[RMDB]
RNA sequence: GGGAACGACUCGAGUAGAGUCGAAAAGCCUGAGCUCCCCUCGCGACGAGUCAACCGCAGUAGGAGGUGGGGGCGAAGAGAGGGCUGAACCCGUCCGCUGCCCGGGCGGUGGAGCCCCCACGGCGAGGACAAGUCGACAUUUCGAUGUCGACUUGUCAAAAGAAACAACAACAACAAC
Reactivity to 2A3 in 0.01 (KOAc 150mM, MgCl2 10mM, bicine 150mM(pH8.5), 24C), signal-to-noise 1, nucleotides 027 to 126: g000c000c020u060g040a020g040c010u030c000c000c000c000u010c010g080c030g060a100c040g020a020g080u080c060a100a080c030c000g030c060a070g040u220a060g070g200a050g050g020u110g000g030g030g020g020c020g010a050a000g070a010g070a090g020g010g000c020u000g010a000a020c010c000c000g040u020c000c000g060c100u110g090c020c070c050g000g000g000c000g000g010u060g030g020a010g000c000c010c070c000c000a020c030g060g000c020g000a030g000
Reactivity to DMS in 0.01 (KOAc 150mM, MgCl2 10mM, bicine 150mM(pH8.5), 24C), signal-to-noise 2, nucleotides 027 to 126: g000c010c000u000g000a150g020c010u000c020c000c000c000u010c030g000c060g040a110c090g020a070g000u000c120a090a150c080c100g040c060a120g020u000a080g000g000a100g000g040u010g010g000g010g000g000c000g000a100a110g010a120g000a110g010g000g010c040u010g000a130a220c230c020c000g000u000c000c000g040c120u000g010c100c210c000g000g000g030c020g000g000u010g010g000a180g010c000c000c000c010c010a030c060g000g020c040g010a060g020
An RNA of 177 nucleotides, treated with 2A3 and DMS and read out base by base. The reactions ran in a buffer of 150 mM KOAc, 10 mM MgCl2 and 150 mM bicine (pH 8.5), at 24 C. For 2A3, 1,437 sequencing reads were counted.